[RMDB]
RNA sequence: GGGAACGACUCGAGUAGAGUCGAAAACUUAUCAACUACACGUAAGAUGCCACACCAAAACCAUCUCAGUUGUAAACAGGUAAUACUUACGGCAUUGCAACUGCAAAUUCAACGAAGCCCAUACUGGGAGCCGAACUAAUUUCGAUUAGUUCGGCUCAAAAGAAACAACAACAACAAC
Reactivity to DMS in 0.01 (KOAc 150mM, MgCl2 10mM, bicine 150mM(pH8.5), 24C), signal-to-noise 1, nucleotides 027 to 126: c010u000u000a000u020c080a020a050c060u000a030c120a000c040g000u000a040a040g000a050u030g000c000c030a020c110a180c020c010a070a070a100a120c190c060a120u010c000u000c010a010g000u020u000g010u010a030a100a210c130a130g000g000u060a030a000u090a050c060u030u000a100c050g020g000c070a080u000u000g000c000a040a050c070u060g000c080a000a110a120u010u010c000a110a080c000g000a130a130g030c000c000c010a000u020a110c010u010g000g020
Reactivity to 2A3 in 0.01 (KOAc 150mM, MgCl2 10mM, bicine 150mM(pH8.5), 24C), signal-to-noise 4, nucleotides 027 to 126: c000u050u070a040u230c070a050a090c050u110a030c110a000c080g050u040a010a100g040a040u000g040c050c000a080c010a030c050c060a040a100a060a060c030c020a140u060c050u040c100a050g000u010u020g050u060a050a060a010c050a090g080g040u030a020a070u060a130c090u120u080a020c040g080g030c050a100u010u100g020c010a040a020c000u050g020c020a010a040a140u130u130c040a040a030c050g080a010a020g020c010c020c000a040u080a200c050u040g030g030